[RMDB]
RNA sequence: GGGAACGACUCGAGUAGAGUCGAAAACAAUAGACUAGGCGUAGUGGCGAAAAACGGCCUGAUAGGGUGCUGCAGAGGCCCACUACUAGGCUAGUAUAAAAAUCUCUGCAGCAUAAACGUCAACAAACACCAUGGAUGAGUUCGCUCAUCCAUGGUGAAAAGAAACAACAACAACAAC
Reactivity to 2A3 in 0.01 (KOAc 150mM, MgCl2 10mM, bicine 150mM(pH8.5), 24C), signal-to-noise 3, nucleotides 027 to 126: c010a000a100u160a170g280a060c000u030a010g080g080c050g030u000a050g020u020g040g040c060g090a110a020a030a020a010c040g100g010c000c000u010g000a030u130a080g180g000g010u020g000c000u010g000c030a000g000a020g000g000c020c040c000a030c010u010a000c000u010a040g040g000c010u010a000g070u070a060u190a130a050a000a010a020u010c000u000c000u020g000c000a000g000c000a000u110a000a110a020c040g010u050c050a020a050c010a090a110a010
Reactivity to DMS in 0.01 (KOAc 150mM, MgCl2 10mM, bicine 150mM(pH8.5), 24C), signal-to-noise 2, nucleotides 027 to 126: c060a070a060u040a150g010a050c000u010a030g020g000c030g010u020a020g000u000g050g000c300g020a030a130a060a080a110c140g000g000c010c000u000g000a120u080a080g010g000g000u010g000c000u000g050c000a020g030a000g010g000c210c030c020a090c050u000a030c030u000a100g000g000c030u010a020g000u000a040u000a000a000a050a020a090u040c000u000c000u000g000c020a010g000c010a000u030a020a040a070c120g020u000c140a060a040c130a060a020a140

Chemical mapping of a 177-nucleotide RNA with 2A3 and DMS. The 2A3 profile rests on 2,011 reads. 2A3 adducts were read by reverse transcription with SuperScript II with manganese.